This 177-nucleotide RNA was probed chemically with DMS and 2A3.
RNA sequence: GGGAACGACUCGAGUAGAGUCGAAAAGGUACUUAGCCAGAUUUAUAAAACACCUGAUUGACACAGACAGGCUUGCUGCUGCGCAGAUCCAAAAGAACAUUGUGAACCCGAUUGCAGAAUCGCUCGGACUAACACACAAAUUCGUUUGUGUGUUAGUAAAAGAAACAACAACAACAAC
Reactivity to DMS in 0.01 (KOAc 150mM, MgCl2 10mM, bicine 150mM(pH8.5), 24C), signal-to-noise 9, nucleotides 027 to 126: g010g020u000a060c090u000u010a110g010c020c030a080g010a120u000u010u000a080u010a080a090a110a110c110a060c040c020u000g000a110u000u000g010a100c070a060c100a060g000a100c090a060g000g000c060u000u010g010c050u000g010c040u000g010c070g000c060a040g000a060u000c030c050a030a050a080a110g000a070a060c090a070u000u000g010u000g000a080a120c070c040c020g010a060u000u010g010c080a090g000a070a070u010c080g010c070u000c070g010g000
Reactivity to 2A3 in 0.01 (KOAc 150mM, MgCl2 10mM, bicine 150mM(pH8.5), 24C), signal-to-noise 7, nucleotides 027 to 126: g030g010u030a050c050u080u090a060g020c010c010a050g030a200u080u210u070a260u120a080a140a030a020c040a030c000c010u030g050a150u050u100g040a040c020a000c010a080g090a070c020a020g010g030c010u010u080g010c020u010g000c000u030g020c040g000c030a010g010a090u010c020c000a010a060a030a050g060a050a020c040a070u100u120g050u030g070a030a020c040c000c010g030a040u050u110g000c030a010g100a220a090u100c060g000c030u010c010g020g000
For 2A3, 12,749 sequencing reads were counted. The reactions ran in a buffer of 150 mM KOAc, 10 mM MgCl2 and 150 mM bicine (pH 8.5), at 24 C.